Structure probing data (DMS and 2A3) for a 207-nucleotide construct.
RNA sequence: GGGAACGACUCGAGUAGAGUCGAAAAUUGCCAACCGAAACCUUCGUCAUCGAUGGACUCCAAAGCCAAUCUUCUUCUUUCCAGAGGAUCUUCAAUAUGAGCAAAAUCAUUCAAAUGGUUGUGGAAGGCCAUGUUACCACCUUCGGUAAGGUGUUCACAUUUAAUACCUAUUCGUAGGUAUUAAAUGAAAAGAAACAACAACAACAAC
Reactivity to DMS in 0.01 (KOAc 150mM, MgCl2 10mM, bicine 150mM(pH8.5), 24C), signal-to-noise 5, nucleotides 027 to 156: u000u010g010c020c040a110a140c010c020g000a050a060a090c040c000u000u000c050g020u000c060a060u000c050g030a070u000g010g010a040c010u010c010c020a060a060a050g030c000c020a060a100u000c020u000u010c010u000u000c020u010u000u000c190c210a120g010a060g010g010a030u000c020u000u000c070a070a120u000a030u000g000a050g000c010a120a100a120a230u000c010a040u000u000c070a070a100a160u000g010g060u000u010g010u000g010g010a080a060g010g000c010c010a040u000g020u000u000a060c040c030a060c040c010u000u000c030g010g010u010a070a090g020g020u000g000u000u000c040a250
Reactivity to 2A3 in 0.01 (KOAc 150mM, MgCl2 10mM, bicine 150mM(pH8.5), 24C), signal-to-noise 9, nucleotides 027 to 156: u120u110g030c010c010a030a010c030c020g040a060a040a050c020c040u130u120c060g080u050c050a090u080c060g130a050u050g010g020a040c020u010c020c020a070a020a030g010c010c010a050a080u010c020u030u000c000u080u010c010u110u200u050c050c030a010g010a000g020g020a030u010c040u130u070c080a060a080u090a060u220g030a020g040c050a060a060a090a160u060c030a040u120u080c040a060a070a120u080g010g000u030u030g030u040g060g020a060a020g060g000c010c000a030u070g030u040u080a040c020c020a020c010c040u050u060c030g070g010u080a080a070g040g010u040g040u070u060c040a020

For 2A3 the reverse transcriptase was SuperScript II with manganese. The DMS profile rests on 16,465 reads. Conditions: 150 mM KOAc, 10 mM MgCl2 and 150 mM bicine (pH 8.5), 24 C. For DMS the reverse transcriptase was MarathonRT. Values are in units of 0.01, from 0 to 300, in steps of 10. The 2A3 profile rests on 8,950 reads.